[RMDB]
RNA sequence: GGGAACGACUCGAGUAGAGUCGAAAAAGCACGGUUUAUGAGGACGCAUUUUGUCCGUGCGGUAAUGCCCUCCUUUACACUUUCUCGCAUGGUGCGGGAGUGUGGAGAGGAAACAAAAGCUAGUCUCGAUAGGCGGUUAACUUCGGUUAACCGCCAACAUGAGAUGGUUCUUCGGAACCAUCUCAUGAAAAGAAACAACAACAACAAC
Reactivity to 2A3 in 0.01 (KOAc 150mM, MgCl2 10mM, bicine 150mM(pH8.5), 24C), signal-to-noise 4, nucleotides 027 to 156: a000g010c000a000c010g000g020u020u020u030a060u140g100a110g020g040a020c070g030c190a200u000u000u000u070g020u010c000c000g000u000g000c000g000g060u130a080a040u240g020c000c000c000u040c000c010u030u060u040a010c000a000c000u090u150u050c010u020c010g040c030a090u200g290g050u290g110c000g000g000g010a010g000u010g000u000g000g010a050g010a010g010g040a020a060a000c040a000a010a000a010g040c040u030a020g010u010c040u020c100g060a100u120a130g000g000c010g000g010u000u000a000a010c000u030u080c190g020g000u010u000a000a000c030c000g000c000c000a000a000
Reactivity to DMS in 0.01 (KOAc 150mM, MgCl2 10mM, bicine 150mM(pH8.5), 24C), signal-to-noise 1, nucleotides 027 to 156: a070g000c020a030c000g030g020u020u000u000a030u010g020a100g010g040a120c110g020c130a110u000u010u010u010g000u000c020c020g020u010g000c000g010g040u000a060a070u000g000c000c010c000u000c010c020u000u000u000a030c000a050c020u000u000u000c010u010c000g030c000a300u010g000g020u030g080c020g010g000g010a020g010u020g050u010g000g010a030g010a070g000g000a040a050a100c030a050a070a080a080g010c070u000a120g000u010c040u000c080g020a190u000a190g000g000c000g030g000u000u000a010a010c000u010u010c300g060g030u000u010a010a000c000c000g000c010c000a010a000